[RMDB]
RNA sequence: GGGAACGACUCGAGUAGAGUCGAAAACCGAUCUGUAACUUCGGGAUAAGGAUUGGCUCUAAAGGUUGGUAGAGUGGACAUUGUAGAGCCUAGAUCAGGGGGUGAGUUUGUAGAGCGGGCAACUGUUACCUACAUAAUGCUUCGGCAUUAUGUAGGUAAAAGAAACAACAACAACAAC
Reactivity to 2A3 in 0.01 (KOAc 150mM, MgCl2 10mM, bicine 150mM(pH8.5), 24C), signal-to-noise 2, nucleotides 027 to 126: c000c010g010a060u010c050u040g050u080a030a100c010u050u090c060g100g030g020a050u050a100a060g020g000a040u070u100g020g010c000u030c010u040a120a100a040g110g000u030u030g090g010u090a090g020a050g160u100g040g020a010c020a030u020u070g030u070a010g000a000g030c000c020u040a050g020a090u100c050a030g000g000g000g010g050u050g020a040g040u050u120u070g050u070a020g010a020g060c060g000g000g000c020a010a020c030u020g010u020u010
Reactivity to DMS in 0.01 (KOAc 150mM, MgCl2 10mM, bicine 150mM(pH8.5), 24C), signal-to-noise 1, nucleotides 027 to 126: c000c020g000a040u000c050u000g000u000a090a170c090u000u000c060g050g060g000a120u010a060a150g000g000a090u000u000g010g000c010u000c030u010a090a070a050g010g020u000u000g000g010u000a070g000a140g010u000g030g000a060c060a060u000u050g020u000a040g000a060g000c020c010u020a080g000a090u010c070a090g000g000g020g010g040u020g000a070g030u000u000u000g030u000a050g010a100g020c040g000g000g020c090a050a070c080u000g010u000u000
Chemical mapping of a 177-nucleotide RNA with 2A3 and DMS. The reactions ran in a buffer of 150 mM KOAc, 10 mM MgCl2 and 150 mM bicine (pH 8.5), at 24 C. The DMS profile rests on 972 reads. DMS adducts were read by reverse transcription with MarathonRT. 2A3 adducts were read by reverse transcription with SuperScript II with manganese.